[RMDB]
RNA sequence: GGGAACGACUCGAGUAGAGUCGAAAACGGGGUCCGGUGCGCUCCUGACGACCCUUGAAAAUCCGCGGGAAGGAAUAGUUUUCACGCCAGGUCGUACUCAUAACCGCAGCAGGUCUCCAAGGUGAAAUCCACUGAACAAUUUCGAUUGUUCAGUGGAAAAAGAAACAACAACAACAAC
Reactivity to DMS in 0.01 (KOAc 150mM, MgCl2 10mM, bicine 150mM(pH8.5), 24C), signal-to-noise 3, nucleotides 027 to 126: c150g020g000g010g000u010c020c080g000g020u010g000c060g000c080u010c110c100u020g020a080c050g000a060c000c000c040u030u000g000a040a040a070a120u020c080c030g010c080g000g000g010a140a080g000g020a160a080u020a120g010u010u000u010u000c010a050c070g000c060c130a090g000g000u000c030g020u000a060c090u000c110a030u020a100a130c210c030g000c030a050g020c050a100g000g000u000c000u000c030c020a120a070g020g000u020g000a040a080a080
Reactivity to 2A3 in 0.01 (KOAc 150mM, MgCl2 10mM, bicine 150mM(pH8.5), 24C), signal-to-noise 3, nucleotides 027 to 126: c040g020g010g030g000u000c010c010g020g080u030g010c030g010c030u060c030c030u010g000a030c020g000a000c000c020c000u020u030g010a020a010a000a050u030c020c000g040c070g100g030g090a120a070g070g010a080a070u110a130g090u010u010u000u040c040a040c040g010c050c040a030g000g000u000c000g000u070a090c050u020c060a030u090a080a090c020c030g020c020a040g000c040a040g000g050u000c010u010c000c000a020a060g160g000u160g050a040a010a020
Chemical mapping of a 177-nucleotide RNA with DMS and 2A3. The 2A3 profile rests on 3,064 reads. Conditions: 150 mM KOAc, 10 mM MgCl2 and 150 mM bicine (pH 8.5), 24 C. Reactivities are rounded to 0.1 and cut off at 0 and 3.